[RMDB]
RNA sequence: GGGAACGACUCGAGUAGAGUCGAAAAGUGCUAUCAUGGGCAAACACAGUAGCUGACAUGCAGUGAUGUCUCCAUUCUGUCUUCCCUGACAAGUCCAGAGAAGGCACUGGGUUGGCAUCCAACAGCUUCUAACAUAAGCGUUCGCGCUUAUGUUAGAAAAAGAAACAACAACAACAAC
Reactivity to 2A3 in 0.01 (KOAc 150mM, MgCl2 10mM, bicine 150mM(pH8.5), 24C), signal-to-noise 2, nucleotides 027 to 126: g040u040g020c020u040a070u200c070a130u170g050g020g000c090a130a140a010c050a000c020a060g070u060a020g000c000u020g040a050c010a080u180g020c050a060g030u070g230a000u020g010u000c010u000c020c000a050u110u060c010u020g000u000c000u010u030c000c030c000u000g000a030c090a300a070g080u000c080c000a000g000a000g020a010a010g010g000c040a000c030u040g040g010g000u180u200g010g020c020a010u040c010c010a040a000c020a000g000c020u010
Reactivity to DMS in 0.01 (KOAc 150mM, MgCl2 10mM, bicine 150mM(pH8.5), 24C), signal-to-noise 1, nucleotides 027 to 126: g010u010g020c040u010a100u010c130a090u010g030g000g030c060a070a020a150c130a070c090a170g000u000a030g020c010u010g020a100c120a090u020g000c170a090g020u000g010a020u000g010u000c020u000c000c000a070u010u000c140u020g000u000c010u000u010c000c030c010u000g020a080c070a070a140g020u020c090c010a030g000a030g010a020a070g010g010c000a020c160u010g000g000g000u030u010g010g020c030a030u010c000c050a140a080c050a040g010c050u000

The record gives the reactivity of an RNA of 177 nucleotides to 2A3 and DMS. Reactivities are given for positions 27 through 126.